[RMDB]
Background
Chemical mapping of a 207-nucleotide RNA with 2A3. It was measured as part of the RMDB library M2RFPK. The 2A3 profile rests on 456 reads.
RNA sequence: GGGAACGACUCGAGUAGAGUCGAAAACCUGUUUUCUGACCAAUAACAGAAUGCACCACAGCGUAAAAUCAUCUGAUUGGGUGAGUUGGUCGCACCGCCAUUUGACGAACGAACGCCAAGCCUAAGCACUACGAGUAUGUGUUCGCACAUACUCGAAUCACCACACACGAUUCGUCGUGUGUGGUGAAAAAGAAACAACAACAACAAC
Reactivity to 2A3 in 0.01 (KOAc 150mM, MgCl2 10mM, bicine 150mM(pH8.5), 24C), signal-to-noise 1, nucleotides 027 to 156: c030c000u000g050u020u030u000u050c030u000g050a020c010c020a110a030u110a120a000c020a010g120a060a050u120g030c060a050c050c000a050c000a000g050c050g080u120a000a000a150a120u080c050a010u000c040u030g050a180u100u090g060g000g040u060g030a030g080u030u090g050g080u040c060g030c030a000c010c000g000c010c010a050u020u020u140g010a040c010g000a070a030c070g000a000a030c070g080c110c030a040a050g000c020c000u070a070a000g000c140a110c200u160a080c000g000a000g020u000a000u000g030u010g000u090u080c150g000c100a000c000a000u000a000c000u000c000g000a000a010